[RMDB]
RNA sequence: GGGAACGACUCGAGUAGAGUCGAAAAGGACAAUGCAAGGAAGGGAAGUGUUCGGAUAGCUAUAAUCAUGUGUGCCAUGCUGUUAAGGAUAACCUUACAUUCUCUAGUUCAUUGGCUCGCAAGACCAAUUACAAUAAAUGUUCGCAUUUAUUGUAAUAAAAGAAACAACAACAACAAC
Reactivity to 2A3 in 0.01 (KOAc 150mM, MgCl2 10mM, bicine 150mM(pH8.5), 24C), signal-to-noise 9, nucleotides 027 to 126: g020g000a020c020a040a060u070g030c020a020a060g040g050a040a040g030g020g020a030a040g070u030g040u090u040c010g010g020a050u050a040g010c040u060a040u110a260a060u100c060a050u050g050u010g020u040g080c020c000a030u040g000c030u060g020u150u080a040a010g030g030a110u070a200a130c010c000u020u020a030c010a050u130u010c030u000c020u060a050g060u100u030c030a040u050u070g000g010c030u020c030g010c040a050a020g030a050c010c010a020
Reactivity to DMS in 0.01 (KOAc 150mM, MgCl2 10mM, bicine 150mM(pH8.5), 24C), signal-to-noise 9, nucleotides 027 to 126: g010g010a060c070a060a090u000g010c100a050a060g010g010a100a090g000g000g010a050a050g010u010g010u000u000c070g020g010a090u000a050g010c060u000a090u010a080a090u010c070a050u000g010u000g010u010g010c060c020a030u000g000c160u000g000u000u010a040a180g000g010a150u010a080a090c060c040u000u000a040c090a090u000u000c060u000c080u000a140g000u000u010c050a060u000u000g010g010c050u000c040g010c140a050a060g010a110c060c050a080